[RMDB]
RNA sequence: GGGAACGACUCGAGUAGAGUCGAAAAAGAGCCGGAUACGUCCGGCUCAACGGGGGAUACGAGUGGUGCCGUCCGCUCCCCCUAUGGCAUAACAAAUGCACCACACACUAGGCUACGGCCUAGUGAAAAAAGGUGUAUGUGUUCGCACAUACACCAACCCUACUUCUACCUUCGGGUAGAAGUAGGGAAAAGAAACAACAACAACAAC
Reactivity to 2A3 in 0.01 (KOAc 150mM, MgCl2 10mM, bicine 150mM(pH8.5), 24C), signal-to-noise 2, nucleotides 027 to 156: a000g020a020g020c010c000g000g000a010u020a010c200g100u030c000c000g000g000c000u000c000a000a000c000g000g000g010g000g000a010u020a090c020g000a010g000u010g000g000u020g000c000c000g020u030c040c070g060c060u030c000c000c000c000c010u050a170u150g130g000c100a110u080a300a070c040a110a080a020u090g000c010a000c000c000a010c000a000c000a000c000u000a000g000g000c000u020a020c210g050g000c000c000u000a000g000u000g020a050a000a000a000a000a000g000g010u000g000u000a010u000g030u000g010u030u030c110g030c090a000c000a010u000a000c000a000c000c000a000a000

Record summary:
An RNA of 207 nucleotides, treated with 2A3 and read out base by base. It was measured as part of the RMDB library M2RFPK. Values cover nucleotides 27 to 156. Conditions: 150 mM KOAc, 10 mM MgCl2 and 150 mM bicine (pH 8.5), 24 C. The 2A3 profile rests on 2,143 reads.